[RMDB]
RNA sequence: GGGAACGACUCGAGUAGAGUCGAAAAGAAGAUGCGGUCCAUGGCGUCGCGGGCGUCCUUGCCGAUGCAGUCCCCCAGGUCCACGCGCGAGAGCGGGUACUCGGUCAGGUUGGUGGUGAAGGUGGUGGAUAUGGCGUCGGAAGAGAAUCGGAAGGAGCAAGUAUGAAUGCUUCGGCAUUCAUACUUGAAAAGAAACAACAACAACAAC
Reactivity to DMS in 0.01 (KOAc 150mM, MgCl2 10mM, bicine 150mM(pH8.5), 24C), signal-to-noise 1, nucleotides 027 to 156: g000a100a020g010a070u000g020c050g050g000u000c010c070a070u010g000g010c030g050u000c030g020c050g000g040g010c050g010u010c030c010u010u000g020c050c010g010a060u000g000c030a280g030u000c030c010c000c010c020a080g000g000u000c020c030a040c030g000c050g010c050g020a150g000a190g040c050g020g000g000u000a090c040u020c000g030g010u000c060a080g000g010u010u000g040g010u020g000g030u000g010a150a090g030g030u000g000g030u010g030g010a130u000a050u010g010g000c000g090u000c030g040g010a040a060g010a150g020a070a060u010c080g000g010a070a060g000g030a170g020
Reactivity to 2A3 in 0.01 (KOAc 150mM, MgCl2 10mM, bicine 150mM(pH8.5), 24C), signal-to-noise 2, nucleotides 027 to 156: g070a030a000g000a030u090g030c020g010g030u010c070c050a100u050g030g000c030g020u040c010g020c030g050g030g000c020g030u080c020c000u060u040g140c020c010g020a060u060g000c050a020g090u080c000c000c000c000c030a000g000g070u020c010c000a060c060g050c020g000c010g040a030g000a010g030c010g010g030g000u010a030c020u010c060g040g000u060c020a040g000g070u110u130g040g010u040g000g040u040g040a090a040g080g020u080g010g050u060g010g020a030u040a090u140g090g010c030g000u010c010g030g010a060a010g030a000g040a050a030u060c060g010g010a040a050g030g020a030g030